[RMDB]
RNA sequence: GGGAACGACUCGAGUAGAGUCGAAAAAUGUUCGAGGGCUACCUCGAGCCCGAGCAGGCACAGGACUACUUCGCUGAAGCGGAGAAGACCUCCAUCGUCCAGCAGUUCGCGCAGAAGAUCGCGAUGGGCACCACGGGUCAGAAGAUCCCGCACUGGAUCUGAAAACCCAAUUCGUUGGGUUUUCAGAAAAAGAAACAACAACAACAAC
Reactivity to 2A3 in 0.01 (KOAc 150mM, MgCl2 10mM, bicine 150mM(pH8.5), 24C), signal-to-noise 1, nucleotides 027 to 156: a000u120g020u130u020c000g020a070g000g080g020c060u180a170c070c010u040c020g010a000g000c010c000c000g040a020g040c090a100g020g060c090a070c000a070g010g010a040c030u040a040c000u090u030c020g000c070u270g080a300a010g010c010g010g000a000g010a040a010g060a070c000c000u010c010c000a070u060c000g090u020c020c030a000g030c010a050g110u070u060c000g020c000g030c070a020g030a300a030g020a220u100c040g000c000g020a020u010g000g060g020c050a010c010c030a020c030g020g020g000u060c010a010g000a160a000g020a080u010c000c010c010g020c010a040c040u040g000g030a030